Description:
Conditions: 150 mM KOAc, 10 mM MgCl2 and 150 mM bicine (pH 8.5), 24 C. This 177-nucleotide RNA was probed chemically with 2A3 and DMS.
[RMDB]
RNA sequence: GGGAACGACUCGAGUAGAGUCGAAAAGCGGGCAAGUGCAACAGAAAGUAAACCGCCUAGAAUUUUUCUAGGUAAGGGUGAAACGGUGCGGUAAGAGCGCACCAGCGAGGUAGGUGACUACCUCGGCCUUUCCUUAGAUCUUCGGAUCUAAGGAAAGAAAAGAAACAACAACAACAAC
Reactivity to 2A3 in 0.01 (KOAc 150mM, MgCl2 10mM, bicine 150mM(pH8.5), 24C), signal-to-noise 2, nucleotides 027 to 126: g040c040g000g040g010c040a060a060g020u120g070c010a060a050c000a030g060a040a070a000g060u140a070a020a010c000c010g000c030c030u000a000g030a060a030u300u300u210u130u060c010u000a010g020g000u000a030a050g040g000g000u030g000a000a040a020c060g000g000u010g000c000g000g040u040a020a010g020a020g050c000g010c020a010c020c020a010g110c000g020a000g010g010u000a000g040g040u080g040a030c000u000a010c010c000u000c010g000g010c010
Reactivity to DMS in 0.01 (KOAc 150mM, MgCl2 10mM, bicine 150mM(pH8.5), 24C), signal-to-noise 2, nucleotides 027 to 126: g020c070g000g000g000c040a030a070g040u000g000c060a110a100c110a040g010a020a020a100g000u000a040a040a020c010c010g000c000c000u000a020g020a030a100u000u030u020u010u000c000u000a000g010g000u000a010a020g000g000g000u000g000a040a040a050c200g040g000u010g000c020g000g000u010a020a070g000a300g000c000g000c000a010c020c010a060g000c010g010a010g000g010u010a000g000g010u020g010a240c010u000a000c010c000u000c010g010g020c190

For 2A3, 1,727 sequencing reads were counted. The DMS profile rests on 1,587 reads. The data come from the RNA Mapping Database (RMDB), library RFMREP.